[RMDB]
The record gives the reactivity of an RNA of 177 nucleotides to DMS and 2A3. The DMS profile rests on 22,136 reads. The RNA was probed in 150 mM KOAc, 10 mM MgCl2 and 150 mM bicine (pH 8.5) at 24 C. Reactivities are rounded to 0.1 and cut off at 0 and 3.
RNA sequence: GGGAACGACUCGAGUAGAGUCGAAAAUGUUGCCGAUCCUGCAGGACACCACGAUCGUCGCGGCCGGCCCGAGCGUGCAGAACGUCAGCCUGUCUGGUGCGGUGCCAGUGGGCAUCGUCGGCGACGCCGUAACCAGAAGUUUCGACUUCUGGUUACGAAAAGAAACAACAACAACAAC
Reactivity to DMS in 0.01 (KOAc 150mM, MgCl2 10mM, bicine 150mM(pH8.5), 24C), signal-to-noise 9, nucleotides 027 to 126: u020g010u000u000g010c010c020g010a070u000c020c010u000g020c150a160g010g010a090c040a060c040c020a050c110g010a120u010c090g000u000c070g010c050g020g010c030c040g000g010c010c060c080g000a110g010c040g020u000g010c200a090g000a100a050c050g010u000c100a150g010c020c010u000g010u000c030u000g010g010u000g010c020g000g010u000g000c010c000a240g020u010g020g010g010c050a010u000c020g010u000c020g030g010c010g000a010c010g010c270
Reactivity to 2A3 in 0.01 (KOAc 150mM, MgCl2 10mM, bicine 150mM(pH8.5), 24C), signal-to-noise 9, nucleotides 027 to 126: u110g000u010u040g030c010c000g010a040u050c010c020u100g100c100a140g010g070a020c000a010c020c010a030c040g040a090u180c040g100u060c050g010c030g070g010c010c030g030g000c010c050c050g100a140g040c010g000u060g000c030a070g080a300a010c010g030u030c030a010g020c000c010u040g020u030c030u040g030g000u040g010c010g000g000u010g010c010c010a230g180u300g090g050g000c000a010u030c020g020u000c010g000g000c010g000a000c000g000c020
2A3 adducts were read by reverse transcription with SuperScript II with manganese. The data come from the RNA Mapping Database (RMDB), library OK2TRN.